Structure probing data (DMS and 2A3) for a 177-nucleotide construct.

RNA sequence: GGGAACGACUCGAGUAGAGUCGAAAACGGUGGAACAGAAGACGGUCGCAUUGGCACGAGUUUUGAUGCAGUGAAUGAAGCAAUUGAAAAUAACGAAGCUAAUAAAGUCUACACUUUCUACGACCUAGGAUAUAAUUUACUUCGGUAAAUUAUAUCCAAAAGAAACAACAACAACAAC
Reactivity to DMS in 0.01 (KOAc 150mM, MgCl2 10mM, bicine 150mM(pH8.5), 24C), signal-to-noise 4, nucleotides 027 to 126: c220g010g040u010g020g000a050a050c110a040g000a120a040g010a080c070g000g020u000c120g040c110a060u010u010g000g020c030a110c050g010a130g010u000u000u000u000g020a050u000g010c010a070g010u010g010a090a110u010g000a100a100g000c040a020a030u000u000g000a060a050a050a070u010a050a090c070g010a100a090g030c030u010a020a070u020a040a060a170g000u000c020u000a070c180a060c050u000u000u000c030u000a070c080g000a090c020c050u000a120
Reactivity to 2A3 in 0.01 (KOAc 150mM, MgCl2 10mM, bicine 150mM(pH8.5), 24C), signal-to-noise 4, nucleotides 027 to 126: c030g020g020u030g000g040a080a010c020a110g100a140a020g030a050c030g030g050u080c050g000c140a040u040u040g010g000c010a000c080g050a070g020u030u040u070u060g050a040u050g000c020a020g060u050g200a100a120u080g020a070a030g020c030a060a110u090u100g070a110a080a030a040u100a050a010c020g050a080a030g000c030u040a040a020u060a070a140a000g000u010c020u060a030c030a000c050u040u080u000c010u060a030c020g060a010c010c030u040a060
Record summary: The data come from the RNA Mapping Database (RMDB), library OK2TRN. The DMS profile rests on 3,268 reads. For DMS the reverse transcriptase was MarathonRT.